[RMDB]
RNA sequence: GGGAACGACUCGAGUAGAGUCGAAAAUACUCACAUUUCGAUGUGAGUAACUGUCUAGUCGCUAGCGCCGAUGAAGCGCUAGCGACUAGACUUUAUUGAUCGCCAGCUAACCUUUCGAGGUUAGCAAACCCCUAUAUAAAUUCGUUUAUAUAGGGGUAAAAGAAACAACAACAACAAC
Reactivity to DMS in 0.01 (KOAc 150mM, MgCl2 10mM, bicine 150mM(pH8.5), 24C), signal-to-noise 1, nucleotides 027 to 126: u000a000c000u010c010a000c000a030u010u000u020c110g010a040u000g010u000g010a030g000u000a010a050c060u010g000u000c000u000a010g050u000c020g040c010u010a020g010c000g060c020c010g000a150u030g000a160a140g010c020g050c020u000a010g000c020g000a010c010u000a000g020a000c000u000u000u000a080u010u010g010a070u000c080g020c060c060a150g000c000u010a010a010c000c000u000u010u020c180g010a010g000g010u000u000a000g000c010a010a050